[RMDB]
Source: RMDB library OK2TST, as collected in RNAgym. An RNA of 177 nucleotides, treated with 2A3 and DMS and read out base by base. DMS adducts were read by reverse transcription with MarathonRT. For 2A3, 940 sequencing reads were counted. The RNA was probed in 150 mM KOAc, 10 mM MgCl2 and 150 mM bicine (pH 8.5) at 24 C.
RNA sequence: GGGAACGACUCGAGUAGAGUCGAAAAUGUCACCGUUGUUCGGUUAUCAGAUGUCGUUCAUUGCCGUAUUCUAGCACCAUCUGAUAGGCUGUCCGUAGUCUCUACAUUGGUCGGCCGAUACGGUAAACGUACUCCUGGACUUCGGUCCAGGAGUACGAAAAGAAACAACAACAACAAC
Reactivity to 2A3 in 0.01 (KOAc 150mM, MgCl2 10mM, bicine 150mM(pH8.5), 24C), signal-to-noise 1, nucleotides 027 to 126: u090g020u040c000a000c130c020g070u020u020g300u300u120c030g000g020u050u030a020u050c030a020g010a030u060g070u040c040g000u080u000c030a070u040u160g000c000c010g040u050a070u050u050c050u050a060g030c050a040c050c000a030u030c010u000g060a050u020a100g020g000c020u030g100u180c030c020g010u040a020g020u010c030u110c050u010a020c000a070u030u150g000g040u040c000g060g000c000c020g010a030u020a020c010g000g020u000a160a030a000
Reactivity to DMS in 0.01 (KOAc 150mM, MgCl2 10mM, bicine 150mM(pH8.5), 24C), signal-to-noise 2, nucleotides 027 to 126: u000g000u000c180a110c120c040g020u000u010g000u000u000c030g000g020u010u000a030u000c010a000g010a170u000g000u010c040g020u000u000c090a170u040u010g030c000c000g000u010a060u000u010c040u000a210g030c300a160c070c010a010u000c010u000g010a060u000a040g000g000c000u000g020u020c140c180g000u000a030g000u040c050u000c030u040a020c020a190u000u010g000g000u000c020g010g040c060c040g000a010u000a000c040g030g030u000a030a050a220